[RMDB]
RNA sequence: GGGAACGACUCGAGUAGAGUCGAAAAUAAAAUAAUGCACUUAAUCCAGUCGCAGACGCUAAAAAUGACGCUGCGUCGCGACGGAUGUGGCAACGCGCACUCACGCCGAAGUGAAAUCGGUAAAAAACAGUCGUAGUAAGUUCGCUUACUACGACUGAAAAGAAACAACAACAACAAC
Reactivity to 2A3 in 0.01 (KOAc 150mM, MgCl2 10mM, bicine 150mM(pH8.5), 24C), signal-to-noise 3, nucleotides 027 to 126: u080a020a050a030a030u270a040a090u100g020c020a010c100u070u110a040a010u040c010c010a100g010u000c000g010c040a050g010a000c020g000c020u090a150a040a060a090a200u250g060a080c120g080c190u050g020c030g000u020c010g000c000g000a000c000g000g000a000u000g010u010g020g000c020a050a050c050g010c030g000c030a020c040u050c010a060c090g010c000c010g010a020a020g050u050g210a080a120a090u050c020g020g030u080a060a060a020a000a060a010
Reactivity to DMS in 0.01 (KOAc 150mM, MgCl2 10mM, bicine 150mM(pH8.5), 24C), signal-to-noise 2, nucleotides 027 to 126: u000a020a090a090a070u000a060a080u000g000c040a030c010u000u000a160a090u000c020c000a080g020u000c000g030c010a070g020a040c000g030c000u000a010a060a080a160a130u010g000a050c140g020c200u000g010c000g010u000c000g020c000g010a010c020g000g000a020u000g000u000g040g000c080a060a050c150g020c050g020c060a050c070u000c030a110c090g000c010c000g000a000a100g000u020g000a000a110a100u020c050g020g000u000a000a020a080a070a040a150